RNA sequence: GGGAACGACUCGAGUAGAGUCGAAAAGAAAGAAAUCAAAGCGGAUUGAUCUACGAAUAACUCUCACUAAUCGGAGUAGUGAGUGAUCCAAUAUCCGUAUUAGAUGUAACUGAGCGUUGAGUAGAAAGGGAAACAAAGAGUUCGCUCUUUGUUUCCCAAAAGAAACAACAACAACAAC
Reactivity to DMS in 0.01 (KOAc 150mM, MgCl2 10mM, bicine 150mM(pH8.5), 24C), signal-to-noise 2, nucleotides 027 to 126: g020a090a060a130g000a110a040a030u050c020a020a080a290g010c030g060g000a060u000u000g020a000u000c000u010a050c080g000a150a030u020a030a140c020u010c000u010c110a080c090u020a060a040u000c190g000g000a140g010u020a080g010u030g020a120g010u000g000a110u010c060c300a040a030u020a020u000c000c000g000u020a080u010u020a130g000a010u000g030u010a140a020c130u000g000a080g000c160g040u000u000g000a220g000u010a070g000a030a000a030
Reactivity to 2A3 in 0.01 (KOAc 150mM, MgCl2 10mM, bicine 150mM(pH8.5), 24C), signal-to-noise 2, nucleotides 027 to 126: g040a000a010a010g100a000a120a000u110c050a010a040a020g000c000g020g000a030u000u120g050a010u040c080u150a070c040g040a010a010u080a210a090c010u000c000u030c050a010c070u050a070a070u300c110g160g010a020g010u010a010g000u000g030a010g000u090g000a030u060c090c000a000a030u080a040u130c020c000g010u020a060u000u030a030g000a010u060g020u120a000a190c050u110g070a000g050c050g080u020u050g010a010g090u100a080g030a060a100a090
Annotation: Structure probing data (DMS and 2A3) for a 177-nucleotide construct. Source: RMDB library OK1LIB, as collected in RNAgym. DMS adducts were read by reverse transcription with MarathonRT. Reactivities are given for positions 27 through 126. The reactions ran in a buffer of 150 mM KOAc, 10 mM MgCl2 and 150 mM bicine (pH 8.5), at 24 C.